[RMDB]
RNA sequence: GGGAACGACUCGAGUAGAGUCGAAAAAAAUUUAGGUGUGAAUAUGUUGUACAAACACACCUUAUGGGAUUAUGUUGCUGAAAUGCCCUUUUUAAACAUGACACAUGGUGUUUGUGGAUACACAGACUCGUAUCUGGGAUUUCGAUCCCAGAUACGAAAAAGAAACAACAACAACAAC
Reactivity to DMS in 0.01 (KOAc 150mM, MgCl2 10mM, bicine 150mM(pH8.5), 24C), signal-to-noise 1, nucleotides 027 to 126: a040a000a060u000u010u010a020g030g000u010g000u000g010a050a120u000a080u010g000u000u000g010u000a180c080a130a110a200c010a010c010a020c030c010u000u000a040u010g040g000g000a130u000u010a070u010g000u010u000g000c190u010g010a050a030a090u000g000c080c010c020u010u000u010u000u010a010a020a100c080a030u000g010a040c130a070c150a020u000g010g010u000g010u000u000u000g010u000g010g000a170u000a100c030a010c040a050g000a030c040